The record gives the reactivity of an RNA of 177 nucleotides to 2A3 and DMS.
The reactions ran in a buffer of 150 mM KOAc, 10 mM MgCl2 and 150 mM bicine (pH 8.5), at 24 C.
[RMDB]
RNA sequence: GGGAACGACUCGAGUAGAGUCGAAAAUCUUGCACCUUCGGGUGCAAGAAAAUGUAAGCGCAUGGGAGCGCACAGCGCACGCUGAAAAACUGCGCAAAAGAAAAACUCAGCACUUCGGUGCUGAGAACAGAUAGUCUCUGUUCGCAGAGACUAUCUGAAAAGAAACAACAACAACAAC
Reactivity to 2A3 in 0.01 (KOAc 150mM, MgCl2 10mM, bicine 150mM(pH8.5), 24C), signal-to-noise 2, nucleotides 027 to 126: u010c000u000u010g000c000a000c000c010u020u040c240g160g040g000u000g000c000a000a000g000a010a000a000a000u090g000u040a160a070g020c010g000c040a060u150g120g090g090a130g010c010g000c030a020c040a060g000c000g000c020a030c080g050c030u040g070a140a010a020a000a000c040u030g000c000g000c000a020a030a110a090g060a030a070a010a040a020c000u000c000a000g000c000a000c000u040u060c230g110g000u010g000c000u010g010a000g000a010a000
Reactivity to DMS in 0.01 (KOAc 150mM, MgCl2 10mM, bicine 150mM(pH8.5), 24C), signal-to-noise 2, nucleotides 027 to 126: u000c000u000u000g010c000a030c000c000u000u000c200g040g020g030u000g000c000a000a000g000a010a000a050a090u010g000u000a080a120g000c010g020c010a060u000g020g000g010a100g000c020g030c030a070c060a090g030c030g030c020a040c190g040c020u000g000a060a050a040a120a180c110u000g010c000g000c010a090a060a080a070g040a080a100a090a110a100c000u000c010a000g030c000a000c010u000u000c160g020g010u000g000c000u000g010a000g010a060a110